[RMDB]
RNA sequence: GGGAACGACUCGAGUAGAGUCGAAAACGGGAGAACCGCUCGAACACCACUUGGCGCUCACCUUCGGGCACUCCGCUGCCGUUGUCGUCGAUGGCGAUCUCCACGCCGGCCCGCGAGCUGACCGCGGCCAACAUGUCGAUUUCGAUCGACAUGUUGGAAAAGAAACAACAACAACAAC
Reactivity to DMS in 0.01 (KOAc 150mM, MgCl2 10mM, bicine 150mM(pH8.5), 24C), signal-to-noise 7, nucleotides 027 to 126: c070g010g010g010a070g020a100a100c130c070g020c030u000c050g010a070a080c110a110c060c040a090c130u010u010g020g020c020g010c070u000c080a090c080c060u000u010c070g000g000g010c080a080c050u000c070c060g010c060u010g000c020c030g010u010u000g010u000c060g000u000c040g020a100u010g010g020c010g010a080u000c030u010c020c040a140c050g010c030c020g010g010c080c010c030g000c020g010a090g000c080u010g010a080c060c010g010c030g010g000
Reactivity to 2A3 in 0.01 (KOAc 150mM, MgCl2 10mM, bicine 150mM(pH8.5), 24C), signal-to-noise 5, nucleotides 027 to 126: c010g010g010g000a060g020a090a100c080c020g040c030u030c030g050a070a030c030a030c080c020a040c090u050u130g030g000c010g000c040u040c050a070c000c020u050u080c080g030g000g010c050a040c070u070c030c040g030c080u060g010c020c020g040u060u060g050u050c050g000u010c020g040a070u130g020g010c000g010a060u030c020u010c040c010a050c020g020c020c030g050g020c000c000c030g000c010g010a020g030c050u090g040a060c030c010g000c000g010g000